[RMDB]
RNA sequence: GGGAACGACUCGAGUAGAGUCGAAAAGAUAUGGAAGCCACUGUGGCAGCGAGGAUCUCGGAAACGAGGGAGCUGUCCAUUGGCUUCCUAAGUCAAACUUCUAAUCUGCUUCGGCAGAUUAGAAGAAUCUAAAGAUUCACUUCGGUGAAUCUUUAGAAAAAGAAACAACAACAACAAC
Reactivity to 2A3 in 0.01 (KOAc 150mM, MgCl2 10mM, bicine 150mM(pH8.5), 24C), signal-to-noise 1, nucleotides 027 to 126: g010a000u060a000u160g000g020a020a000g010c020c020a020c030u050g170u300g070g000c000a000g010c000g030a260g060g000a020u000c000u010c000g010g000a060a100a040c010g000a000g010g050g000a020g020c000u000g010u010c000c000a000u010u020g000g020c000u010u000c000c000u000a010a010g010u000c020a030a110a140c010u000u000c000u010a000a000u000c000u000g020c010u070u060c210g170g000c000a020g000a000u010u010a000g000a010a010g010a000a010
Reactivity to DMS in 0.01 (KOAc 150mM, MgCl2 10mM, bicine 150mM(pH8.5), 24C), signal-to-noise 2, nucleotides 027 to 126: g000a030u020a300u000g000g000a000a040g010c010c000a000c270u000g010u010g000g010c010a020g000c000g000a090g020g000a020u010c000u000c000g000g000a140a080a190c020g000a020g000g000g000a020g020c010u000g000u000c000c000a000u000u000g010g020c000u010u000c000c000u000a000a060g000u000c030a150a160a190c010u000u000c000u000a000a000u000c000u000g000c000u000u000c260g030g010c000a010g010a010u000u000a010g010a010a000g020a070a090